[RMDB]
RNA sequence: GGGAACGACUCGAGUAGAGUCGAAAAAGAGUACGGCCGCAAGGUUUCCGGUUGUGGAUGGCAGCGUGUGUGUCGCCCCGUCGUCUAGUGCUCGUUCUAGGGCUGGGGCGUCAGCAUCCAGGUAAAACCAUCUUAUCGAGUUCGCUCGAUAAGAUGGAAAAGAAACAACAACAACAAC
Reactivity to 2A3 in 0.01 (KOAc 150mM, MgCl2 10mM, bicine 150mM(pH8.5), 24C), signal-to-noise 1, nucleotides 027 to 126: a000g080a000g020u030a030c000g050g000c020c060g040c080a080a020g070g030u020u050u050c050c010g070g010u090u160g080u050g060g030a070u000g060g040c030a030g030c080g010u150g000u040g010u000g000u070c000g000c040c000c000c010g050u080c030g020u040c020u030a020g010u030g120c120u050c210g130u090u030c010u020a020g000g010g010c020u110g050g050g000g030c000g000u000c000a000g030c010a020u000c000c010a010g000g060u080a010a020a040a050
Reactivity to DMS in 0.01 (KOAc 150mM, MgCl2 10mM, bicine 150mM(pH8.5), 24C), signal-to-noise 3, nucleotides 027 to 126: a080g000a110g000u000a040c090g010g010c030c020g010c120a100a070g020g020u000u000u010c050c040g020g010u000u010g020u010g000g010a040u000g000g000c120a060g020c110g020u000g010u010g030u000g020u000c000g010c000c000c000c010g010u000c050g000u000c000u010a030g000u000g020c110u000c130g000u020u000c030u000a050g000g010g000c030u020g020g000g010g010c010g010u000c030a090g010c000a050u000c020c010a090g010g000u000a040a080a130a180